[RMDB]
RNA sequence: GGGAACGACUCGAGUAGAGUCGAAAACCCCGGGCGCUCCCCUCGGAGAUGUUCCAGGUGGGUUCACAUCCCCAACCCGCGGGCCGGCUACUCUUCUUUCCCUUCUCUCGUCUUCCUCGGUCAACCUAUGGCAUUGAGUUCGCUCAAUGCAAAAGAAACAACAACAACAAC
Reactivity to DMS in 0.01 (KOAc 150mM, MgCl2 10mM, bicine 150mM(pH8.5), 24C), signal-to-noise 9, nucleotides 027 to 129: c000c010c010c100g000g000g000c060g020c030u020c010c010c030c040u040c100g010g000a050g010a120u050g050u040u030c020c040a130g030g030u020g020g030g030u020u010c130a090c090a090u040c010c020c010c070a080a050c030c030c020g000c040g030g020g000c040c000g020g010c040u040a040c040u020c020u020u040c020u020u010u020c020c010c040u020u020c050u010c040u020c040g010u030c040u050u020c030c010u000c030g020g020u020c080a090a120c040c020u050a110u080g010
Reactivity to 2A3 in 0.01 (KOAc 150mM, MgCl2 10mM, bicine 150mM(pH8.5), 24C), signal-to-noise 9, nucleotides 027 to 129: c000c000c000c000g000g010g000c030g010c010u020c000c000c010c010u030c060g030g010a070g020a110u120g050u140u070c010c010a030g040g080u090g050g040g000u130u110c090a050c020a170u070c000c000c010c000a020a040c000c000c010g030c030g010g020g000c010c010g010g010c000u050a070c010u030c000u100u020c000u020u050u040c010c010c000u050u020c030u010c010u010c010g040u010c000u110u050c020c010u010c010g010g010u030c010a030a050c000c000u080a120u170g110

Structure probing data (DMS and 2A3) for a 170-nucleotide construct. DMS adducts were read by reverse transcription with MarathonRT. Source: RMDB library 15KLIB, as collected in RNAgym. Conditions: 150 mM KOAc, 10 mM MgCl2 and 150 mM bicine (pH 8.5), 24 C.